[RMDB]
An RNA of 177 nucleotides, treated with 2A3 and DMS and read out base by base. For DMS, 7,631 sequencing reads were counted. 2A3 adducts were read by reverse transcription with SuperScript II with manganese. The RNA was probed in 150 mM KOAc, 10 mM MgCl2 and 150 mM bicine (pH 8.5) at 24 C.

RNA sequence: GGGAACGACUCGAGUAGAGUCGAAAAGAUGCAGGCCAUUUUUUGUGGUGCCGCAGGUGGUACUGUCAGUAUGGCUGCUGUCGGGAAAAUGACCGUUCAAUCGACGAUUCCCUCCGGUAGUUAUGCACAGCAUAACUGGGUUCGCCCAGUUAUGCUGAAAAGAAACAACAACAACAAC
Reactivity to 2A3 in 0.01 (KOAc 150mM, MgCl2 10mM, bicine 150mM(pH8.5), 24C), signal-to-noise 4, nucleotides 027 to 126: g080a010u160g020c040a010g040g120c010c020a050u090u070u030u020u140u140g050u050g030g110u110g130c080c020g070c040a050g000g120u130g020g040u070a170c010u020g090u140c010a030g020u020a020u020g030g000c000u000g000c010u010g000u020c020g000g050g000a040a040a040a160u120g080a080c060c040g000u050u100c090a080a230u120c030g000a010c010g020a050u020u030c020c000c000u010c010c000g010g030u050a040g020u070u030a010u070g020c020a020
Reactivity to DMS in 0.01 (KOAc 150mM, MgCl2 10mM, bicine 150mM(pH8.5), 24C), signal-to-noise 5, nucleotides 027 to 126: g010a100u000g020c000a040g010g020c020c010a000u000u000u010u020u020u000g040u010g000g000u000g020c050c030g020c120a090g010g020u000g010g010u000a070c020u030g000u010c100a080g010u000a020u000g000g000c000u000g010c020u000g020u000c120g000g000g000a030a030a100a130u010g000a070c110c020g020u010u010c170a100a100u010c120g010a050c040g000a200u000u000c000c010c010u000c100c030g010g010u000a020g010u000u010a040u000g000c070a220